[RMDB]
RNA sequence: GGGAACGACUCGAGUAGAGUCGAAAACAAUUGGCUUAUAGCUCUAGUGCAAAUGGCAGCCUGGUUGGCACAACUUUGCAGGGCAAGCCUAUUGGUAUGUUCUUCCCUUAUGACAUCGAACUUGUCAACCCGUGUACGUUCGCGUACACGAAAAGAAACAACAACAACAAC
Reactivity to DMS in 0.01 (KOAc 150mM, MgCl2 10mM, bicine 150mM(pH8.5), 24C), signal-to-noise 9, nucleotides 027 to 129: c010a010a000u000u000g000g000c020u030u040a080u080a280g000c000u040c020u050a120g120u000g000c020a010a020a020u010g040g040c190a180g040c010c000u060g130g060u090u080g050g020c010a060c090a150a060c120u030u000u020g040c000a020g010g000g000c010a020a010g040c020c010u000a000u000u000g040g000u020a100u070g030u020u020c080u020u030c010c010c010u040u050a140u040g020a000c000a050u030c160g020a070a080c140u020u010g000u030c020a070a090c140c080
Reactivity to 2A3 in 0.01 (KOAc 150mM, MgCl2 10mM, bicine 150mM(pH8.5), 24C), signal-to-noise 9, nucleotides 027 to 129: c000a000a000u010u030g000g000c000u050u080a070u130a300g000c000u000c030u070a130g220u040g060c010a010a010a050u080g060g040c090a030g010c020c010u180g300g050u190u280g050g000c010a030c010a080a110c060u010u000u010g000c010a010g000g000g000c000a010a000g000c000c000u010a000u000u000g010g020u130a120u160g110u080u050c010u030u020c000c000c000u030u120a220u050g010a000c000a020u090c130g060a060a100c060u060u040g010u010c010a020a040c040c030
The record gives the reactivity of an RNA of 170 nucleotides to DMS and 2A3. It was measured as part of the RMDB library 15KLIB. For 2A3 the reverse transcriptase was SuperScript II with manganese. For 2A3, 177,631 sequencing reads were counted.